[RMDB]
RNA sequence: GGGAACGACUCGAGUAGAGUCGAAAAGUGUAACCUCCUCUCAAAUCAGCGAUAUCAAACGUACCAUUCCGUGAAACACCGGGGUAUCUGUUUGGUGGAACCUGAUUAGAGGAAACUCAAAGAGUGCUAUGGUAUGGUGACGGAGUGCGCUGGUCAACGUACAGGGAUUGUUCGCAAUCCCUGUACGAAAAGAAACAACAACAACAAC
Reactivity to DMS in 0.01 (KOAc 150mM, MgCl2 10mM, bicine 150mM(pH8.5), 24C), signal-to-noise 1, nucleotides 027 to 156: g010u000g030u000a120a070c020c080u000c010c000u010c020u010c160a100a060a020u010c000a020g040c020g010a300u000a020u020c010a060a020a040c000g020u000a040c000c020a210u010u000c010c010g000u000g000a190a140a090c140a180c060c000g040g020g000g020u010a020u000c050u020g020u000u010u010g010g000u010g020g000a130a120c080c020u010g020a040u000u000a070g010a020g040g000a050a040a040c040u050c020a170a090a120g000a140g040u010g000c050u010a040u000g060g040u010a020u020g000g020u020g010a090c020g020g000a070g000u000g040c080g000c000u000g000g000u000c050a050a210
Reactivity to 2A3 in 0.01 (KOAc 150mM, MgCl2 10mM, bicine 150mM(pH8.5), 24C), signal-to-noise 3, nucleotides 027 to 156: g050u040g050u070a060a050c010c020u000c000c010u000c010u020c090a040a080a060u000c000a010g010c010g040a010u000a010u100c000a000a000a000c000g000u000a000c000c010a120u180u070c000c000g010u000g060a040a050a000c060a020c180c010g000g000g000g000u020a020u040c130u130g000u000u000u000g000g000u000g000g010a030a040c000c000u000g000a000u010u000a000g000a000g000g070a020a040a020c050u090c070a100a060a010g070a030g030u050g010c040u030a030u110g020g030u050a020u070g040g030u040g020a030c030g000g020a040g010u060g010c030g000c060u050g010g050u090c030a050a050
This 207-nucleotide RNA was probed chemically with DMS and 2A3. The 2A3 profile rests on 2,833 reads. The DMS profile rests on 2,015 reads. The reactions ran in a buffer of 150 mM KOAc, 10 mM MgCl2 and 150 mM bicine (pH 8.5), at 24 C.